[RMDB]
RNA sequence: GGGAACGACUCGAGUAGAGUCGAAAAAACCGGGAUUGAUCACGAUUGGUUCCACUCUGUCAAUCGUAGUUAUCUAAAAUAGUGAUUGCCCCACAGCAACGUGGCUGGACGGUAAAUUUUCCAUAAAAUGCAUGUUUAGAUUCGUCUAAACAUGCAUAAAAGAAACAACAACAACAAC
Reactivity to 2A3 in 0.01 (KOAc 150mM, MgCl2 10mM, bicine 150mM(pH8.5), 24C), signal-to-noise 9, nucleotides 027 to 126: a000a000c040c000g010g010g010a090u060u060g010a010u070c030a010c060g030a030u020u040g060g010u090u040c030c000a050c050u060c020u050g020u020c010a020a060u040c050g020u020a030g030u040u070a040u040c060u080a040a040a090a120u090a040g080u070g070a060u030u090g030c000c000c010c010a060c010a020g070c020a030a190c130g040u050g050g010c030u030g010g020a020c010g000g010u030a030a060a080u040u050u010u010c030c010a030u140a110a120a010
Reactivity to DMS in 0.01 (KOAc 150mM, MgCl2 10mM, bicine 150mM(pH8.5), 24C), signal-to-noise 8, nucleotides 027 to 126: a080a060c030c010g000g000g000a040u000u000g010a030u000c050a040c090g010a040u000u000g010g000u020u010c060c050a060c060u010c070u000g000u000c010a020a030u010c060g020u010a040g020u010u010a030u000c050u010a060a040a060a060u000a070g010u010g000a300u000u010g010c030c010c010c030a160c060a090g020c130a090a110c160g020u010g010g000c060u020g000g010a100c180g000g010u000a030a040a110u010u000u010u000c010c020a080u020a050a070a080